[RMDB]
About this RNA:
Structure probing data (DMS and 2A3) for a 177-nucleotide construct. Reactivities are given for positions 27 through 126. As a SHAPE reagent, 2A3 marks flexible, mostly unpaired nucleotides at the ribose 2'-OH. It was measured as part of the RMDB library OK1LIB.

RNA sequence: GGGAACGACUCGAGUAGAGUCGAAAAUGGGGGUUUGUGUGAAAAGGAGGGGAGAGGAGAGACCUCUAUUAGUUUAGCACCUGCUGGGCCAGGAUAUCACGUGCAUGCUCACUUAAGCCUCCCAGCACGAGUCAGGGGUAUUCGUACCCCUGACUCGAAAAGAAACAACAACAACAAC
Reactivity to DMS in 0.01 (KOAc 150mM, MgCl2 10mM, bicine 150mM(pH8.5), 24C), signal-to-noise 1, nucleotides 027 to 126: u010g020g050g010g000g000u040u000u000g020u070g000u020g000a070a030a080a150g000g000a110g130g020g040g000a120g000a180g050g000a110g040a080g000a020c000c030u000c000u000a080u010u020a000g000u000u000u000a020g040c130a060c170c100u000g000c000u050g000g000g030c300c030a000g000g000a100u000a060u030c170a100c190g020u000g010c090a130u110g040c180u080c030a040c000u000u020a020a120g000c020c000u000c000c000c000a080g020c000a120
Reactivity to 2A3 in 0.01 (KOAc 150mM, MgCl2 10mM, bicine 150mM(pH8.5), 24C), signal-to-noise 2, nucleotides 027 to 126: u110g000g000g020g000g060u000u050u010g230u010g020u040g030a060a190a050a040g040g000a050g030g010g000g030a140g000a040g000g000a080g010a000g010a070c000c000u000c020u010a160u120u160a050g080u070u070u060a080g000c000a020c030c000u000g000c000u000g000g070g030c130c130a000g040g000a000u010a030u110c080a020c110g000u010g040c020a110u080g060c050u070c080a040c020u120u120a020a000g010c000c000u020c000c010c020a000g000c000a050